[RMDB]
RNA sequence: GGGAACGACUCGAGUAGAGUCGAAAAACAUUUGAAAAUAGCAGUAAUACAGUCUAGCCCCCUCAUUAAACUGGGCAUAAAGAAGUUACAAAAUUUUCUAAAAGUCACAAUGAGUAGAGACAAGACGAUAUUCCCGUCUAUUCGUAGACGGGAAUAUAAAAGAAACAACAACAACAAC
Reactivity to DMS in 0.01 (KOAc 150mM, MgCl2 10mM, bicine 150mM(pH8.5), 24C), signal-to-noise 1, nucleotides 027 to 126: a160c040a080u010u000u000g010a060a020a120a040u020a070g030c160a140g000u000a000a010u000a130c060a080g070u000c040u000a110g020c050c000c010c080c010u000c080a050u000u000a090a060a090c060u020g000g000g000c020a110u010a010a070a000g010a170a080g000u000u040a030c090a030a090a160a030u000u010u000u020c000u050a010a030a050a100g000u000c010a030c130a020a070u000g000a030g010u000a070g000a080g010a010c090a100a030g020a060c190g010

Source information
Chemical mapping of a 177-nucleotide RNA with DMS. Values cover nucleotides 27 to 126.